Annotation: The data come from the RNA Mapping Database (RMDB), library OK2TST. An RNA of 177 nucleotides, treated with DMS and read out base by base. The reactions ran in a buffer of 150 mM KOAc, 10 mM MgCl2 and 150 mM bicine (pH 8.5), at 24 C. The DMS profile rests on 786 reads.
[RMDB]
RNA sequence: GGGAACGACUCGAGUAGAGUCGAAAAAUUGCUUUCUUCUCUGAUGAAGCAGUACAAAACCUUGUUGAAGGUGGUUUAAACGCAGCAUUAUCUGUCAUUAACACUGGUACAUGUGAAACACGUUUAACGAUUGUGCCAGUUUCGACUGGCACAAUCGAAAAGAAACAACAACAACAAC
Reactivity to DMS in 0.01 (KOAc 150mM, MgCl2 10mM, bicine 150mM(pH8.5), 24C), signal-to-noise 1, nucleotides 027 to 126: a070u020u000g010c020u000u000u020c030u010u000c050u010c160u000g010a050u000g000a020a010g000c090a050g030u010a120c160a000a070a080a070c010c000u020u010g000u000u010g010a030a100g010g010u000g020g030u010u010u000a040a040a040c020g000c050a210g020c040a020u000u000a050u000c030u000g000u010c140a190u000u000a190a090c120a030c060u000g010g000u000a000c300a010u000g020u010g010a160a100a090c100a090c030g000u000u020u000a050a120